The record gives the reactivity of an RNA of 177 nucleotides to DMS. High DMS reactivity at an A or C suggests that its Watson-Crick edge is free. The DMS profile rests on 2,339 reads.
RNA sequence: GGGAACGACUCGAGUAGAGUCGAAAAGGUGAUCUCAUUGAAUUGGUGGAGCAAUCAGUAGAUCACAUCACGCUAUGCCUGUCUUGUUUUCUGGGGAUUCUUCAGGGCAGAACGCCCGGUUUAAACAAAAAUGCUCCUAGUUCGCUAGGAGCAUUUUAAAAGAAACAACAACAACAAC
Reactivity to DMS in 0.01 (KOAc 150mM, MgCl2 10mM, bicine 150mM(pH8.5), 24C), signal-to-noise 2, nucleotides 027 to 126: g010g010u010g000a010u000c010u000c160a030u010u010g000a080a060u000u010g010g020u000g020g000a210g010c020a060a030u000c040a040g020u000a010g000a020u000c010a020c000a120u010c070a090c160g020c090u010a060u010g000c020c020u000g010u000c020u000u000g000u010u000u000u020c050u000g000g000g000g000a160u010u000c060u000u000c050a120g010g000g030c060a120g010a070a210c160g010c000c000c020g000g000u010u010u010a040a060a100c130a010